[RMDB]
RNA sequence: GGGAACGACUCGAGUAGAGUCGAAAAGCAAUCAUCAGGGGAUGUCUGUAAACCCAAAAUGAUUGUCAUAUAGAACAGAAUCGCCGUGCAGUACGCUGUGGACGAAUCGGCUAAAACUUACACAGCUCGCCCAAAGCACCCUGCCCGUCGGGUCGCUACUGUACUAAAGGUUCGCCUUUAGUACAGUAAAAGAAACAACAACAACAAC
Reactivity to 2A3 in 0.01 (KOAc 150mM, MgCl2 10mM, bicine 150mM(pH8.5), 24C), signal-to-noise 4, nucleotides 027 to 156: g030c010a000a000u010c010a010u010c020a010g050g020g000g000a040u120g080u090c050u060g080u150a110a150a140c000c000c040a010a010a000a010u010g010a000u000u000g000u000c000a000u130a030u070a160g140a110a040c070a060g080a090a080u080c060g000c010c010g010u010g020c130a010g030u030a000c050g000c010u010g020u030g020g010a000c000g020a030a020u050c010g010g000c000u010a010a010a010a090c050u090u150a020c040a000c000a010g010c010u060c050g040c000c030c000a080a110a000g010c010a030c000c000c030u030g020c030c020c030g080u100c060g020g000g010u020c030g000c010u010
Reactivity to DMS in 0.01 (KOAc 150mM, MgCl2 10mM, bicine 150mM(pH8.5), 24C), signal-to-noise 1, nucleotides 027 to 156: g120c030a040a010u010c020a000u030c000a300g020g000g000g000a120u010g020u020c140u000g030u000a090a100a300c000c010c000a020a100a110a040u000g020a050u000u000g020u020c050a150u000a100u000a100g000a110a120c080a110g000a090a100u000c050g030c030c010g010u000g030c080a100g000u000a110c160g050c000u000g010u000g010g020a030c020g030a070a110u020c080g030g030c040u000a040a060a060a080c080u000u000a060c030a140c060a040g020c010u010c000g070c010c010c020a040a120a090g000c010a040c010c010c000u020g030c020c050c060g000u010c040g010g010g000u010c010g000c040u000